Overview:
Source: RMDB library M2RFPK, as collected in RNAgym. The record gives the reactivity of an RNA of 207 nucleotides to 2A3 and DMS. The RNA was probed in 150 mM KOAc, 10 mM MgCl2 and 150 mM bicine (pH 8.5) at 24 C. DMS adducts were read by reverse transcription with MarathonRT. Values cover nucleotides 27 to 156. The 2A3 profile rests on 2,012 reads.

[RMDB]
RNA sequence: GGGAACGACUCGAGUAGAGUCGAAAAGACAUCGCCCAACGCUUCACAACCUGAAAGAAGCGCCUGUUAUCAGGACGGUUGAUCCAUUUACCGGUGCAGACCUCUGCAAACACCGGGUUGCAGAACAUAGAGGGAAAUUUGUUCGCAAAUUUCCCAACAUAGUAACUUCGUUCGCGAAGUUACUAUGAAAAGAAACAACAACAACAAC
Reactivity to 2A3 in 0.01 (KOAc 150mM, MgCl2 10mM, bicine 150mM(pH8.5), 24C), signal-to-noise 3, nucleotides 027 to 156: g140a020c040a100u050c100g060c010c000c000a050a030c010g000c000u010u020c020a010c010a130a030c000c000u010g000a030a020a020g000a000a000g000c000g010c000c000u100g010u200u150a140u300c010a000g010g000a000c000g020g010u000u010g020a090u040c040c020a050u030u110u220a110c000c000g000g030u050g030c030a020g120a250c030c070u200c030u130g000c000a060a130a000c080a000c030c010g010g010g040u010u060g000c060a020g040a130a030c050a070u120a070g130a190g050g000g020a000a000a000u020u000u000g050u060u100c250g000c150a000a000a000u010u000u010c000c000c000a000a000
Reactivity to DMS in 0.01 (KOAc 150mM, MgCl2 10mM, bicine 150mM(pH8.5), 24C), signal-to-noise 3, nucleotides 027 to 156: g020a210c080a030u000c060g000c020c000c010a100a060c000g020c010u000u000c010a170c090a110a280c150c080u000g000a130a150a290g000a030a020g000c030g020c020c080u010g000u010u000a180u000c110a090g030g020a040c030g000g040u000u000g000a170u000c050c020a130u010u010u020a090c010c000g000g040u000g000c010a090g010a110c050c060u010c040u000g020c020a150a100a010c010a060c040c020g010g010g020u000u000g020c020a070g000a080a120c080a110u010a090g010a140g010g020g010a020a020a060u010u000u010g000u000u000c300g040c030a020a020a060u000u000u000c000c000c000a010a050